[RMDB]
RNA sequence: GGGAACGACUCGAGUAGAGUCGAAAAGAUCGGUCGCAGACAAGGAAAGGGGGCCUCCGUGGCCCCUUUUCUCGUGCGGCGGCCUGCAUCCGUUCAGUUGCUGAUGGAAUCGCUGCCGCACUGCUUGACUCGAUGAUAACUUCGGUUAUCAUCGAGUAAAAGAAACAACAACAACAAC
Reactivity to DMS in 0.01 (KOAc 150mM, MgCl2 10mM, bicine 150mM(pH8.5), 24C), signal-to-noise 1, nucleotides 027 to 126: g000a060u010c050g010g040u010c090g020c010a090g000a160c270a180a090g000g000a020a020a030g000g000g000g000g000c000c020u000c270c280g000u010g010g010c020c000c000c000u000u000u000u000c000u030c180g030u000g000c010g030g020c010g000g000c000c040u000g030c130a100u000c010c010g000u000u010c040a060g000u010u010g010c100u000g020a030u000g030g010a050a110u000c200g020c000u000g010c010c000g020c020a060c000u000g000c060u000u010g010